An RNA of 177 nucleotides, treated with 2A3 and DMS and read out base by base. DMS adducts were read by reverse transcription with MarathonRT. The RNA was probed in 150 mM KOAc, 10 mM MgCl2 and 150 mM bicine (pH 8.5) at 24 C.
RNA sequence: GGGAACGACUCGAGUAGAGUCGAAAAAGAGCGAUACGUCGCUCAGAUGCGGGUCCUCAGGCUACAACACAGGACCCGGGCGCUCCUCUGACCCCUCGUGUCUUGUGUUGCAGCCGGAGGGACGCAAAACAUAGACUUUCUUCGGAAAGUCUAUGUUAAAAGAAACAACAACAACAAC
Reactivity to 2A3 in 0.01 (KOAc 150mM, MgCl2 10mM, bicine 150mM(pH8.5), 24C), signal-to-noise 9, nucleotides 027 to 126: a000g020a000g000c020g000a010u020a050c250g090u020c000g010c010u000c010a010g020a020u090g000c010g010g050g210u050c000c000u000c000a010g010g000c000u010a010c010a010a000c000a000c000a000g000g000a000c000c050c010g000g000g000c080g000c030u090c030c030u140c210u220g120a140c010c010c000c010u050c030g020u040g000u000c000u010u010g000u000g000u000u000g000c010a000g000c000c000g000g000a000g000g000g000a000c000g000c000a030a070
Reactivity to DMS in 0.01 (KOAc 150mM, MgCl2 10mM, bicine 150mM(pH8.5), 24C), signal-to-noise 6, nucleotides 027 to 126: a080g000a000g010c000g000a030u000a050c170g030u000c000g020c000u000c000a070g010a130u010g000c010g010g010g010u010c000c000u000c010a040g010g000c000u000a070c020a000a010c010a010c020a010g000g000a010c000c040c050g000g000g000c260g010c190u020c040c150u040c150u030g020a130c080c060c080c020u010c030g000u000g010u010c000u000u000g010u000g000u000u000g010c060a010g010c010c000g000g010a020g000g000g000a010c010g000c000a040a030